RNA sequence: GGGAACGACUCGAGUAGAGUCGAAAAGAGGAGUCAUUCGUGACUCCUCAAAGGGAGCUCAACUCUCCGGCUCAAGUCCGAGAGCCUUCGGACCCAAAAGAAUGCUGUUCCUGUUCGCAGGAACAAAGGCAUUCUAGUGAUUCGUCACUAGAAUGCCAAAAGAAACAACAACAACAAC
Reactivity to DMS in 0.01 (KOAc 150mM, MgCl2 10mM, bicine 150mM(pH8.5), 24C), signal-to-noise 2, nucleotides 027 to 126: g010a010g020g000a030g010u000c000a030u010u000c120g040u000g000a010c000u000c000c000u000c000a010a040a090g030g000g000a050g000c200u010c200a110a240c050u010c010u000c020c010g000g050c000u000c070a150a170g000u000c030c030g000a090g000a140g030c120c140u000u000c020g000g000a190c030c010c020a060a070a030a150g010a030a090u010g010c060u000g020u000u000c000c000u000g000u010u020c150g000c010a020g010g000a000a000c000a000a070a080
Reactivity to 2A3 in 0.01 (KOAc 150mM, MgCl2 10mM, bicine 150mM(pH8.5), 24C), signal-to-noise 3, nucleotides 027 to 126: g000a000g030g000a010g010u010c010a000u110u100c160g100u100g000a000c000u000c000c000u010c000a000a000a000g000g020g000a020g010c050u050c220a040a150c070u000c000u000c030c050g000g030c020u020c060a050a050g100u000c020c020g010a020g010a040g090c010c000u030u020c000g040g000a020c000c000c000a030a080a000a040g130a090a080u190g060c070u030g060u010u010c010c010u010g000u020u030c230g030c030a000g000g020a000a010c010a020a030a010
Description: An RNA of 177 nucleotides, treated with DMS and 2A3 and read out base by base. DMS adducts were read by reverse transcription with MarathonRT. Reactivities are given for positions 27 through 126. Source: RMDB library M2PK50, as collected in RNAgym.